[RMDB]
RNA sequence: GGGAACGACUCGAGUAGAGUCGAAAACUGCACCUUUGGCACAACAGCAAGUUACUAAAUGGACAUGGGAGAAGAAAGCUGAUACGACUGAGUCAACAAAUGCAGCAUCAACCACAUUUCAGUCAAAUCCCCAUUUUAUGUUCGCAUAAAAUGGGGAAAAAGAAACAACAACAACAAC
Reactivity to DMS in 0.01 (KOAc 150mM, MgCl2 10mM, bicine 150mM(pH8.5), 24C), signal-to-noise 3, nucleotides 027 to 126: c030u000g020c030a050c050c050u010u000u000g010g010c010a080c110a060a070c100a030g020c060a090a100g000u000u000a050c090u000a030a100a060u010g000g010a070c050a070u000g010g000g020a080g030a090a100g000a080a060a120g010c050u000g000a060u000a080c110g000a040c040u000g000a080g020u000c050a020a050c090a050a050a070u010g000c010a070g000c030a040u000c080a060a130c030c060a090c140a080u000u000u000c040a030g000u020c090a070a090a160
Reactivity to 2A3 in 0.01 (KOAc 150mM, MgCl2 10mM, bicine 150mM(pH8.5), 24C), signal-to-noise 2, nucleotides 027 to 126: c010u050g010c050a030c010c020u040u060u090g020g020c030a010c010a050a070c020a030g060c030a100a000g000u050u050a120c110u100a030a160a130u100g030g030a000c010a050u030g050g030g010a090g040a120a020g100a090a130a040g040c010u020g000a040u020a110c050g000a010c040u080g010a020g000u050c020a030a020c000a020a080a030u120g020c010a010g020c000a050u050c020a020a010c030c040a040c020a120u050u050u040c020a030g020u020c000a040a030a130